[RMDB]
Structure probing data (DMS and 2A3) for a 177-nucleotide construct.
RNA sequence: GGGAACGACUCGAGUAGAGUCGAAAAAUAGUAUAGGUAAAAAUGAGCAAACAUUAUUGACACAAGCCUAUGAUGAAAUGAUGGGUCAUCAAUAUGCAAAUGUACAACAAAGAGUACAAGCAACUGACGCAGUACUACCAUUCGUGGUAGUACUGCGAAAAGAAACAACAACAACAAC
Reactivity to DMS in 0.01 (KOAc 150mM, MgCl2 10mM, bicine 150mM(pH8.5), 24C), signal-to-noise 1, nucleotides 027 to 126: a130u010a140g010u010a050u000a040g010g050u000a010a080a080a070a010u010g000a160g000c060a100a060a050c040a060u000u000a060u040u000g000a040c090a050c100a010a160g000c010c050u000a030u000g010a050u000g000a070a120a090u000g040a030u010g000g030g010u000c010a010u000c050a010a030u000a060u000g010c010a060a180a090u000g010u000a040c050a160a150c180a060a060a060g000a110g000u000a010c030a140a010g010c090a080a080c200u010g000a130
Reactivity to 2A3 in 0.01 (KOAc 150mM, MgCl2 10mM, bicine 150mM(pH8.5), 24C), signal-to-noise 2, nucleotides 027 to 126: a000u110a010g070u080a060u060a070g040g080u080a110a090a060a060a130u170g030a040g100c030a000a070a230c000a130u120u160a040u080u230g040a040c010a010c010a220a000g000c010c020u000a070u050g040a060u090g040a010a100a070u130g070a040u090g030g050g000u000c010a020u020c030a010a080u150a050u200g070c010a050a170a020u070g000u020a010c010a080a010c010a020a300a000g110a060g030u010a010c030a070a000g090c030a010a100c110u050g030a010
The DMS profile rests on 512 reads.